[RMDB]
RNA sequence: GGGAACGACUCGAGUAGAGUCGAAAAGGGGCCAUGUCCUACCUGCGCGGUGUGGACAUGAAAGGCGUGGGCCUCGACAUCGUGCAGGGCCUGGUAAACGGCAUCCUGGCCGGGCCGCGCCUGGUGCAAUCUAUGGAGGAUUCGUCCUCCAUAGAUUAAAAGAAACAACAACAACAAC
Reactivity to DMS in 0.01 (KOAc 150mM, MgCl2 10mM, bicine 150mM(pH8.5), 24C), signal-to-noise 9, nucleotides 027 to 126: g010g010g010g020c150c010a030u000g000u000c000c000u000a030c030c010u010g030c220g030c160g010g010u000g010u000g010g010a020c040a020u000g000a040a110a030g000g010c010g020u000g020g040g010c010c000u010c060g010a060c060a090u010c180g020u010g020c040a040g010g000g010c030c010u000g020g010u010a060a110a170c180g000g010c010a070u010c020c010u000g010g020c020c010g000g000g000c000c010g010c040g000c010c000u000g000g000u010g020c120
Reactivity to 2A3 in 0.01 (KOAc 150mM, MgCl2 10mM, bicine 150mM(pH8.5), 24C), signal-to-noise 5, nucleotides 027 to 126: g020g000g020g000c030c010a020u020g010u010c000c000u000a020c000c010u110g100c150g040c190g090g030u080g080u070g060g000a010c020a010u040g010a050a030a000g020g000c040g040u120g120g090g020c000c030u060c030g000a010c000a140u180c080g100u140g110c010a010g010g010g010c000c020u050g040g050u190a200a140a040c060g010g010c020a070u130c000c010u020g010g030c020c000g010g020g000c000c030g000c000g000c020c000u020g010g030u090g030c030